[RMDB]
RNA sequence: GGGAACGACUCGAGUAGAGUCGAAAAUGCUGACAUGGCUAGGAUUAAACUCAAGGAGCACGUCCCUUUCGAUGACGUGCAUUGCAGUUGGUCUAGUAACACUAUACUUAGGAGUCAUGGUUCAGGCCUGGUACGCCUUUUUCGAAAGGCGUACCAGAAAAGAAACAACAACAACAAC
Reactivity to DMS in 0.01 (KOAc 150mM, MgCl2 10mM, bicine 150mM(pH8.5), 24C), signal-to-noise 3, nucleotides 027 to 126: u030g010c020u000g000a040c000a020u000g010g020c000u000a200g020g010a030u020u010a050a000a030c000u000c000a030a010g020g020a230g080c000a000c000g020u010c000c140c210u020u020u040c230g010a190u010g000a010c000g010u000g000c000a040u000u000g010c190a010g020u000u000g000g000u030c020u000a060g010u030a110a110c110a250c180u020a020u000a070c120u030u060a160g000g020a050g040u000c000a000u020g000g040u000u020c060a020g000g000c100
Reactivity to 2A3 in 0.01 (KOAc 150mM, MgCl2 10mM, bicine 150mM(pH8.5), 24C), signal-to-noise 4, nucleotides 027 to 126: u150g010c000u000g010a000c000a010u010g020g010c000u000a030g070g000a030u010u070a170a040a000c000u000c000a000a070g160g030a210g130c010a010c000g010u010c060c080c020u040u270u130c270g060a200u200g010a020c020g010u000g020c000a000u000u020g000c060a000g010u000u000g010g020u000c040u020a030g040u080a140a030c150a020c080u140a110u100a160c060u070u150a050g000g110a010g010u000c010a000u000g100g080u010u040c020a020g040g010c010

An RNA of 177 nucleotides, treated with DMS and 2A3 and read out base by base. DMS adducts were read by reverse transcription with MarathonRT. Values are in units of 0.01, from 0 to 300, in steps of 10. The reactions ran in a buffer of 150 mM KOAc, 10 mM MgCl2 and 150 mM bicine (pH 8.5), at 24 C. The DMS profile rests on 3,183 reads. The data come from the RNA Mapping Database (RMDB), library OK1LIB.